This 177-nucleotide RNA was probed chemically with DMS and 2A3. The DMS profile rests on 3,793 reads. Conditions: 150 mM KOAc, 10 mM MgCl2 and 150 mM bicine (pH 8.5), 24 C.
RNA sequence: GGGAACGACUCGAGUAGAGUCGAAAAAAGCCUUCGUCACUCCAAACGUUUCGGCGAGAAGCAGGCCAUUAUCGCCGGCAUGGCGGCCGACGCGCUGGGCUGGCGUUCGCGACGCGAGGCUGGAUGGCCACUUACGCUAAUUCGUUAGCGUAAGUGGAAAAGAAACAACAACAACAAC
Reactivity to DMS in 0.01 (KOAc 150mM, MgCl2 10mM, bicine 150mM(pH8.5), 24C), signal-to-noise 4, nucleotides 027 to 126: a120a050g000c000c010u000u000c010g030u000c010a100c030u010c090c100a080a120a110c060g010u000u000u000c040g040g000c020g000a110g010a070a080g010c060a130g020g010c020c060a040u000u010a080u010c200g010c020c010g010g020c070a060u010g010g020c140g000g010c050c030g030a040c140g000c020g020c100u010g000g000g020c100u010g000g000c030g010u000u000c090g020c050g000a080c110g020c100g010a060g000g020c020u000g000g000a180u000g000g010
Reactivity to 2A3 in 0.01 (KOAc 150mM, MgCl2 10mM, bicine 150mM(pH8.5), 24C), signal-to-noise 3, nucleotides 027 to 126: a000a000g010c000c000u020u010c020g010u010c000a050c040u050c020c000a120a090a100c030g000u010u090u090c060g050g010c010g020a070g020a050a000g040c050a030g040g040c040c000a080u180u120a130u170c050g000c030c020g060g040c110a170u120g070g040c000g070g010c040c000g040a050c050g000c010g000c030u060g000g080g000c010u030g030g000c010g020u050u050c080g020c050g020a030c050g030c060g020a010g010g010c010u010g000g050a110u070g100g000